[RMDB]
RNA sequence: GGGAACGACUCGAGUAGAGUCGAAAAUGAGCGUGGCGUGCAUGGGGAAACGGAAAUAGCCAAACUACGCAAUUACCCCAACAUGUACAACGAGUGGGCUGUUGACUACGCAGGCCAGCGCAAUUUGUAUCACCUAAAGAUUCGUCUUUAGGUGAUAAAAAGAAACAACAACAACAAC
Reactivity to 2A3 in 0.01 (KOAc 150mM, MgCl2 10mM, bicine 150mM(pH8.5), 24C), signal-to-noise 7, nucleotides 027 to 126: u130g010a030g010c030g000u030g020g030c140g060u010g000c030a100u080g010g000g010g060a040a050a030c050g030g050a050a060a030u050a040g020c010c000a060a110a050c040u140a030c020g010c030a040a100u080u120a210c010c010c000c010a010a030c040a060u110g020u090a070c020a100a050c090g020a020g070u090g010g050g000c020u030g020u040u020g040a080c020u050a020c110g000c010a000g100g000c000c010a040g050c020g000c010a020a030u070u020u140g050
Reactivity to DMS in 0.01 (KOAc 150mM, MgCl2 10mM, bicine 150mM(pH8.5), 24C), signal-to-noise 9, nucleotides 027 to 126: u010g010a250g010c010g040u000g010g010c020g020u010g020c020a170u010g000g010g010g010a080a100a100c120g010g000a070a070a070u000a050g010c080c100a050a120a090c120u000a090c050g010c070a070a090u010u000a200c030c030c010c040a060a100c190a070u010g010u000a080c110a080a080c060g000a080g010u000g000g000g010c020u000g010u000u000g000a160c050u000a080c110g010c020a040g000g010c010c020a040g020c020g010c050a070a080u000u000u000g010